Background
Source: RMDB library 15KLIB, as collected in RNAgym. Structure probing data (2A3 and DMS) for a 170-nucleotide construct. High DMS reactivity at an A or C suggests that its Watson-Crick edge is free. For 2A3, 50,838 sequencing reads were counted. For DMS the reverse transcriptase was MarathonRT. The DMS profile rests on 55,445 reads. The RNA was probed in 150 mM KOAc, 10 mM MgCl2 and 150 mM bicine (pH 8.5) at 24 C.
[RMDB]
RNA sequence: GGGAACGACUCGAGUAGAGUCGAAAAGGGUGUGCAAACUGUUGAAGAUCUGCGUGCUCGCAUGACAUAUGUAUGCCAGUGUGGUGGUGAACGUCAUCGGCAAUUAGUCGAACACACCACCCCCUGGAGAGUUUGAGAUUCGUCUCAAACAAAAGAAACAACAACAACAAC
Reactivity to 2A3 in 0.01 (KOAc 150mM, MgCl2 10mM, bicine 150mM(pH8.5), 24C), signal-to-noise 9, nucleotides 027 to 129: g030g000g000u040g000u010g020c030a030a060a050c080u070g090u210u230g110a110a040g020a190u040c020u040g000c020g030u050g040c030u020c050g000c050a080u170g040a050c020a060u230a040u200g130u120a060u160g050c000c000a010g000u060g020u070g170g020u000g000g000u010g040a220a060c100g020u040c080a110u010c030g000g010c010a040a240u240u040a110g000u000c000g000a030a010c030a010c000a000c000c000a000c010c000c000c000c000u000g000g000a030g000a000
Reactivity to DMS in 0.01 (KOAc 150mM, MgCl2 10mM, bicine 150mM(pH8.5), 24C), signal-to-noise 9, nucleotides 027 to 129: g000g000g040u000g020u000g000c070a040a060a100c080u020g000u080u080g040a200a020g030a140u030c090u000g030c000g010u020g030c080u020c030g030c120a050u030g040a100c090a110u070a000u040g040u040a050u040g050c000c030a000g000u040g020u050g030g020u000g010g000u000g020a110a120c180g000u030c140a140u030c010g010g060c020a040a090u080u050a090g020u020c020g000a020a040c060a100c020a010c000c000a020c010c030c000c090c030u000g030g010a080g000a080